RNA sequence: GGGAACGACUCGAGUAGAGUCGAAAAGAUAUGGACCCAGGGAGCUCCGAUCGGAAACGAUCGAAGAGCAUCGAUCUGGUGUCCUAAGUCAAACCUCACAAGAAUGCUUCGGCAUUCUUGUGAGGAAGUUGACAAUACCGUUCGCGGUAUUGUCAACAAAAGAAACAACAACAACAAC
Reactivity to 2A3 in 0.01 (KOAc 150mM, MgCl2 10mM, bicine 150mM(pH8.5), 24C), signal-to-noise 2, nucleotides 027 to 126: g030a010u070a040u130g030g010a000c010c010c000a020g050g000g010a030g020c000u010c000c020g000a000u000c000g020g030a050a050a050c000g000a000u020c050g050a230a100g010a000g000c020a070u300c000g010a030u000c010u010g000g110u250g030u090c000c000u020a130a010g020u000c020a030a040a190c000c010u000c000a010c000a010a010g000a000a010u010g020c000u060u170c250g180g000c000a000u000u000c000u000u020g000u000g000a000g000g000a000a010
Reactivity to DMS in 0.01 (KOAc 150mM, MgCl2 10mM, bicine 150mM(pH8.5), 24C), signal-to-noise 1, nucleotides 027 to 126: g020a040u010a300u000g010g010a000c010c000c000a020g000g000g000a040g010c000u020c010c000g010a000u000c000g000g010a130a050a150c000g010a010u000c000g000a090a030g010a000g040c010a160u000c200g000a050u030c000u000g010g000u000g000u000c000c010u000a030a060g010u000c030a100a080a160c000c000u000c000a000c000a010a010g000a020a010u000g010c000u000u020c240g010g010c000a000u000u000c000u000u010g030u000g000a000g000g000a000a010
Annotation:
An RNA of 177 nucleotides, treated with 2A3 and DMS and read out base by base. It was measured as part of the RMDB library TTRDEL. 2A3 adducts were read by reverse transcription with SuperScript II with manganese. The RNA was probed in 150 mM KOAc, 10 mM MgCl2 and 150 mM bicine (pH 8.5) at 24 C. The 2A3 profile rests on 3,191 reads.